[RMDB]
RNA sequence: GGGAACGACUCGAGUAGAGUCGAAAACGCAUGGUUAUCUCUGAGUUUUUUCCGGUUAAUGAUGAAACCAUCACUACCGGCAUCGGCCGUAACCGCAUUAAUUUCUCAAGAAAAUCCAAACCAUCCAACUGAACUAUGUAUUCGUACAUAGUUCAGUAAAAGAAACAACAACAACAAC
Reactivity to 2A3 in 0.01 (KOAc 150mM, MgCl2 10mM, bicine 150mM(pH8.5), 24C), signal-to-noise 8, nucleotides 027 to 126: c050g000c040a060u090g010g000u040u060a070u050c050u000c050u050g050a050g070u040u020u000u020u130u030c020c000g000g010u050u060a110a040u050g030a010u010g070a300a120a110c130c000a010u010c000a010c050u090a050c010c020g020g000c020a100u190c060g150g010c020c010g010u020a020a020c000c010g000c010a010u030u080a040a050u020u100u010c020u010c020a010a030g060a050a100a020a040u050c060c030a080a010a030c030c010a030u060c040c010a030
Reactivity to DMS in 0.01 (KOAc 150mM, MgCl2 10mM, bicine 150mM(pH8.5), 24C), signal-to-noise 8, nucleotides 027 to 126: c140g010c120a050u000g030g000u000u000a080u000c100u000c070u010g010a060g000u000u010u000u000u010u010c080c000g020g010u000u000a040a080u000g010a020u000g000a160a110a160c290c010a020u000c010a030c050u000a050c080c000g000g000c300a060u000c090g010g010c030c100g000u000a030a040c020c030g010c110a050u000u000a060a060u000u000u000c010u000c020a080a090g000a060a030a070a080u000c070c070a060a070a090c080c040a060u000c100c100a120
The record gives the reactivity of an RNA of 177 nucleotides to 2A3 and DMS. The reactions ran in a buffer of 150 mM KOAc, 10 mM MgCl2 and 150 mM bicine (pH 8.5), at 24 C. Values are in units of 0.01, from 0 to 300, in steps of 10. Source: RMDB library OK2TST, as collected in RNAgym.